Notes: An RNA of 177 nucleotides, treated with DMS and read out base by base. In probing experiments dimethyl sulfate is read out at A N1 and C N3, which are open when not base-paired. The RNA was probed in 150 mM KOAc, 10 mM MgCl2 and 150 mM bicine (pH 8.5) at 24 C. It was measured as part of the RMDB library TTRDEL. The DMS profile rests on 639 reads.
RNA sequence: GGGAACGACUCGAGUAGAGUCGAAAAGAUAUGGACCAUGGACAUGCGUGUUCCAUCGGAAACGAUGGGUAGCGCAACAGCCCGCUGGUCCUAAGUCAAAAGGAUUUGCCCUUCGGGGCAAAUCCAACGAGUCGAACUUGUUCGCAAGUUCGACUCGAAAAGAAACAACAACAACAAC
Reactivity to DMS in 0.01 (KOAc 150mM, MgCl2 10mM, bicine 150mM(pH8.5), 24C), signal-to-noise 1, nucleotides 027 to 126: g010a040u040a300u010g000g000a020c010c000a080u000g000g020a010c040a260u010g010c030g050u000g000u000u010c030c000a000u000c000g000g020a160a090a170c000g010a020u000g020g010g000u000a300g010c040g020c010a010a070c220a190g030c010c000c020g000c160u000g000g030u000c000c000u000a020a140g000u000c020a060a100a180a060g000g020a000u000u000u010g020c000c000c000u000u020c150g010g010g000g030c020a000a000a000u000c000c010a010a020